Notes: This 177-nucleotide RNA was probed chemically with DMS and 2A3. The RNA was probed in 150 mM KOAc, 10 mM MgCl2 and 150 mM bicine (pH 8.5) at 24 C. The data come from the RNA Mapping Database (RMDB), library OK2TST.

[RMDB]
RNA sequence: GGGAACGACUCGAGUAGAGUCGAAAAGUAGGCAUUGAAUGGCUGAACCAGUGAAUCCAAAGUUAAUGCAUGACUAUUCUAGUGCCUCCUGAAUGCGUUGCAACCAAGGUUCAUCCUCCAGACCUCCGACAAAAACAAACUUCGGUUUGUUUUUGUCAAAAGAAACAACAACAACAAC
Reactivity to DMS in 0.01 (KOAc 150mM, MgCl2 10mM, bicine 150mM(pH8.5), 24C), signal-to-noise 2, nucleotides 027 to 126: g010u000a090g010g020c040a050u000u020g000a100a100u010g000g010c040u000g000a090a110c050c040a130g050u020g010a140a060u010c050c080a080a090a130g010u010u000a070a050u000g010c040a010u000g000a110c060u000a080u000u000c050u000a060g020u000g010c040c020u010c050c030u010g000a030a050u000g000c020g030u000u010g020c070a040a080c050c020a070a110g010g010u010u000c030a060u010c020c000u000c020c070a100g000a130c040c030u000c130c120
Reactivity to 2A3 in 0.01 (KOAc 150mM, MgCl2 10mM, bicine 150mM(pH8.5), 24C), signal-to-noise 1, nucleotides 027 to 126: g060u050a010g020g000c030a020u000u130g080a090a030u110g010g000c070u050g000a010a020c020c000a030g030u030g210a060a060u020c050c010a160a040a060g040u130u120a130a030u120g050c020a050u120g070a100c010u100a060u050u060c050u050a040g070u020g100c000c030u060c000c000u070g040a100a040u020g010c000g090u100u010g010c030a000a010c040c000a010a000g060g000u030u000c000a020u000c000c000u030c030c000a000g020a130c020c010u000c060c070